[RMDB]
RNA sequence: GGGAACGACUCGAGUAGAGUCGAAAAUCGCAGAGUUGAUUGAACCUUUACUUGUUCCAAACGGGAGUUGGACCAUAGUACUAAAUCUACCAACCGUUGGCCGAUGUCUGAAAUUUGAUAUGAAAGGCGCAACGAUAGCGUUCGCGCUAUCGUUGCGAAAAGAAACAACAACAACAAC
Reactivity to DMS in 0.01 (KOAc 150mM, MgCl2 10mM, bicine 150mM(pH8.5), 24C), signal-to-noise 1, nucleotides 027 to 126: u000c100g250c050a110g000a160g000u010u010g000a000u000u000g010a210a280c050c120u000u020u000a000c010u000u000g020u000u000c000c050a030a080a050c070g030g040g000a190g000u000u000g000g000a070c000c040a020u010a030g050u000a160c290u000a000a100a040u000c000u000a080c000c030a000a060c100c020g020u000u030g040g010c050c030g000a080u010g000u000c010u010g010a070a100a040u000u000u000g000a130u000a030u000g000a010a060a170g000g070

An RNA of 177 nucleotides, treated with DMS and read out base by base. Conditions: 150 mM KOAc, 10 mM MgCl2 and 150 mM bicine (pH 8.5), 24 C.